An RNA of 177 nucleotides, treated with DMS and 2A3 and read out base by base. The RNA was probed in 150 mM KOAc, 10 mM MgCl2 and 150 mM bicine (pH 8.5) at 24 C. For DMS the reverse transcriptase was MarathonRT.
RNA sequence: GGGAACGACUCGAGUAGAGUCGAAAAUGUGUUCAUUUUAUGGAUUUUCGUGUUGUACGAUUUUUUUCAGUUGCGUUAGCAACUACGUGCCCACAAUACUUCCGAUGCAUUUAGAUAAUUUUUGGAAUCUAAUCCUUCACUUCGGUGAAGGAUUAGAAAAAGAAACAACAACAACAAC
Reactivity to DMS in 0.01 (KOAc 150mM, MgCl2 10mM, bicine 150mM(pH8.5), 24C), signal-to-noise 2, nucleotides 027 to 126: u010g010u010g010u010u000c090a070u020u010u030u000a100u010g000g010a020u000u000u000u000c140g010u010g020u000u010g040u000a030c020g000a040u000u020u020u020u000u010u000c120a010g010u010u010g020c000g010u010u010a150g010c000a000a010c020u000a060c020g000u000g020c000c300c000a020c020a000a040u000a050c070u000u000c000c010g000a070u000g000c030a010u000u000u000a120g010a150u010a040a120u000u010u010u000u000g010g010a130a160
Reactivity to 2A3 in 0.01 (KOAc 150mM, MgCl2 10mM, bicine 150mM(pH8.5), 24C), signal-to-noise 1, nucleotides 027 to 126: u090g010u010g010u000u110c050a050u090u100u130u300a230u270g010g000a050u060u000u030u020c110g000u050g000u100u050g000u010a020c020g010a110u050u060u000u040u000u060u250c110a000g000u030u000g000c040g080u130u160a090g000c000a030a000c000u000a030c000g030u020g000c000c010c010a000c000a010a040u110a050c050u050u000c000c030g020a030u000g040c000a020u010u000u140a050g040a040u150a230a160u140u090u040u060u190g150g020a020a010

For 2A3, 661 sequencing reads were counted.